[RMDB]
RNA sequence: GGGAACGACUCGAGUAGAGUCGAAAAGCACAACGGCGCGAGCAUGUCGACCAACUCGAUGCAACGAGAAGAACGCGGACUAACUACAGAAUAGGCAGCCAAGACGCAGUGGCACAGCGCCGAGCGAAUUUUAUUUGAAUUUCGAUUCAAAUAAAAUAAAAGAAACAACAACAACAAC
Reactivity to DMS in 0.01 (KOAc 150mM, MgCl2 10mM, bicine 150mM(pH8.5), 24C), signal-to-noise 9, nucleotides 027 to 126: g000c050a100c110a130a130c050g000g010c020g020c030g010a100g000c110a090u010g010u010c030g000a100c080c080a080a150c070u000c020g000a110u030g010c220a110a140c040g000a040g010a110a130g010a120a130c110g000c010g000g000a050c040u010a080a240c080u010a050c100a090g010a100a180u020a060g000g000c070a040g010c070c040a080a130g000a060c020g010c030a090g020u020g000g010c030a030c110a140g000c030g010c000c000g000a070g000c040g010a070
Reactivity to 2A3 in 0.01 (KOAc 150mM, MgCl2 10mM, bicine 150mM(pH8.5), 24C), signal-to-noise 9, nucleotides 027 to 126: g050c030a030c020a130a110c050g020g000c010g010c010g020a030g020c110a070u070g020u030c020g030a060c010c020a060a050c010u000c020g070a070u160g080c050a100a090c040g020a010g010a130a040g050a070a010c050g000c010g060g020a030c010u040a080a020c020u080a060c040a060g110a180a150u140a080g070g010c040a010g030c020c020a040a020g020a010c020g000c040a020g030u070g040g000c040a020c010a050g030c000g000c010c000g000a000g000c020g020a020